[RMDB]
RNA sequence: GGGAACGACUCGAGUAGAGUCGAAAAGAUAUGGAAUGGAGCGAGGAUCAACUCGUAACAUCUGUCGGAAACGACAGUGGAGUUGGGAGCUCCUUUCCUAAGUCAAACUCCCCCUUCGGGGGGAGAAGGAAGAACUAAAGUUCGCUUUAGUUCUUCCAAAAGAAACAACAACAACAAC
Reactivity to DMS in 0.01 (KOAc 150mM, MgCl2 10mM, bicine 150mM(pH8.5), 24C), signal-to-noise 5, nucleotides 027 to 126: g000a040u000a300u000g010g000a010a010u000g000g010a010g020c000g000a070g010g000a060u010c000a010a010c000u000c000g000u000a040a110c140a030u000c000u000g000u000c000g010g000a110a080a210c000g010a010c000a010g020u010g000g000a010g000u000u000g000g000g000a080g000c000u000c000c000u000u000u000c000c000u000a040a110g010u010c030a100a130a250c000u000c000c000c000c000c010u000u010c180g040g010g010g000g010g010a000g000a010a030
Reactivity to 2A3 in 0.01 (KOAc 150mM, MgCl2 10mM, bicine 150mM(pH8.5), 24C), signal-to-noise 3, nucleotides 027 to 126: g010a010u070a050u110g000g010a010a010u020g010g000a000g030c040g040a290g100g020a050u030c000a000a000c000u000c010g060u100a050a030c030a210u200c000u000g000u000c000g000g040a060a050a080c010g010a000c000a000g000u010g020g000a000g000u000u000g000g000g000a010g000c000u010c010c000u000u000u000c000c000u000a030a010g020u000c000a030a050a250c010u010c000c000c000c010c020u020u140c250g010g010g020g010g020g010a000g000a010a010